[RMDB]
RNA sequence: GGGAACGACUCGAGUAGAGUCGAAAAUAGAUUAGAGUAAUAGCAAUCGUCGUAUUCUGAUCAGUGUAUGUGACGAUUGGAGAACGCUACAUACACAUGAGACGGUAGCGUUCUCUCACCGUCUCAAGAUAGUAUGGGGAUUCGUCUCUAUGCUAUCAAAAGAAACAACAACAACAAC
Reactivity to DMS in 0.01 (KOAc 150mM, MgCl2 10mM, bicine 150mM(pH8.5), 24C), signal-to-noise 9, nucleotides 027 to 126: u020a080g010a030u000u000a010g000a030g010u010a040a040u040a110g020c060a150a080u030c120g000u020c050g010u000a030u000u000c010u000g000a040u010c050a150g010u020g010u020a060u010g000u010g000a000c000g000a060u000u010g000g000a020g000a020a010c000g010c000u000a020c020a070u030a230c170a130c230a000u030g000a120g010a080c170g000g000u000a010g000c020g000u000u000c010u010c000u000c140a000c090c030g000u000c000u000c030a080a130
Reactivity to 2A3 in 0.01 (KOAc 150mM, MgCl2 10mM, bicine 150mM(pH8.5), 24C), signal-to-noise 9, nucleotides 027 to 126: u140a010g040a020u030u020a020g010a000g040u050a030a120u060a100g030c050a030a100u110c040g090u020c010g000u020a010u020u000c010u020g050a070u070c040a070g050u030g020u130a070u100g090u050g010a000c000g020a030u010u050g030g000a020g000a010a000c010g000c000u010a010c000a060u140a030c070a010c020a070u150g050a030g030a060c070g020g000u000a000g000c010g000u000u000c000u000c000u000c000a000c000c010g010u000c010u000c010a010a020